This 177-nucleotide RNA was probed chemically with 2A3 and DMS. For 2A3 the reverse transcriptase was SuperScript II with manganese. The data come from the RNA Mapping Database (RMDB), library OK1LIB. The RNA was probed in 150 mM KOAc, 10 mM MgCl2 and 150 mM bicine (pH 8.5) at 24 C. Reactivities are given for positions 27 through 126. As a SHAPE reagent, 2A3 marks flexible, mostly unpaired nucleotides at the ribose 2'-OH. The 2A3 profile rests on 69,575 reads. Reactivities are rounded to 0.1 and cut off at 0 and 3.

[RMDB]
RNA sequence: GGGAACGACUCGAGUAGAGUCGAAAAUUACCAGCUCGGCGAGUGGGUGAUUCCCCGCGGGUAUUCGAUCAUUAUCAAUAUCGCCCAGAUACAUGGCGAUCCCGACGUCUUCCCGCAGCCGGAUCGCCCUAAAUCAAACAUUCGUGUUUGAUUUAGGAAAAGAAACAACAACAACAAC
Reactivity to 2A3 in 0.01 (KOAc 150mM, MgCl2 10mM, bicine 150mM(pH8.5), 24C), signal-to-noise 9, nucleotides 027 to 126: u040u030a060c010c000a040g020c030u040c030g080g000c040g040a080g050u190g010g030g010u060g060a110u160u200c010c000c000c010g010c020g000g010g010u060a080u040u080c040g160a160u030c030a060u040u250a050u120c070a070a080u060a050u200c040g040c010c040c010a040g040a080u110a090c130a100u120g020g000c010g010a010u030c010c010c010g090a120c020g030u020c020u110u080c010c000c000g010c020a010g020c020c010g000g010a060u070c030g040c010
Reactivity to DMS in 0.01 (KOAc 150mM, MgCl2 10mM, bicine 150mM(pH8.5), 24C), signal-to-noise 9, nucleotides 027 to 126: u010u030a090c040c020a140g010c040u000c040g010g010c120g010a060g030u020g000g010g010u000g000a070u000u000c020c030c030c110g010c050g010g000g010u030a030u020u010c070g010a070u020c100a070u020u020a100u020c090a070a110u030a070u010c080g010c030c020c080a120g010a070u020a060c200a060u020g000g010c000g000a010u000c030c030c040g010a110c060g010u010c090u010u000c010c010c010g010c060a170g010c080c200g010g000a020u010c030g000c040